[RMDB]
RNA sequence: GGGAACGACUCGAGUAGAGUCGAAAAUUUUCUAAUUACGCAUUCCAAGCAUGGACGAGGCGAACAUACAGGACAAGGAGCGGUUCGCCAGCCGCGAGAACCAUUGCGAGAUUGAACGACGUCGCCGCGAUAAAGACCAUUUCGAUGGUCUUUAUCGAAAAGAAACAACAACAACAAC
Reactivity to DMS in 0.01 (KOAc 150mM, MgCl2 10mM, bicine 150mM(pH8.5), 24C), signal-to-noise 7, nucleotides 027 to 126: u000u010u000u000c020u010a070a110u010u000a160c070g010c020a090u000u000c040c040a080a190g010c080a080u010g010g010a090c110g010a130g000g010c020g010a020a060c070a080u010a100c120a120g020g010a090c100a090a090g010g010a150g000c080g010g000u000u000c040g010c050c050a100g000c040c030g010c040g000a080g010a090a090c060c030a060u000u000g010c020g020a250g010a120u000u000g000a050a080c100g000a070c100g010u000c040g000c030c040g010
Reactivity to 2A3 in 0.01 (KOAc 150mM, MgCl2 10mM, bicine 150mM(pH8.5), 24C), signal-to-noise 4, nucleotides 027 to 126: u040u030u030u020c030u050a070a080u100u140a060c040g020c030a040u030u070c020c020a030a030g010c040a090u120g030g020a050c030g050a070g030g020c010g010a020a010c030a010u220a040c050a040g010g130a040c060a100a100g060g010a080g100c050g020g010u040u040c040g010c000c010a010g000c020c000g010c020g010a030g020a070a040c030c010a060u040u120g020c030g000a050g020a080u040u070g040a090a020c030g070a010c030g050u020c030g000c030c010g030
Source: RMDB library OK2TST, as collected in RNAgym. The record gives the reactivity of an RNA of 177 nucleotides to DMS and 2A3. The DMS profile rests on 7,098 reads. 2A3 adducts were read by reverse transcription with SuperScript II with manganese. 2A3 is a SHAPE reagent: it acylates the 2'-hydroxyl of flexible nucleotides of all four kinds. The reactions ran in a buffer of 150 mM KOAc, 10 mM MgCl2 and 150 mM bicine (pH 8.5), at 24 C.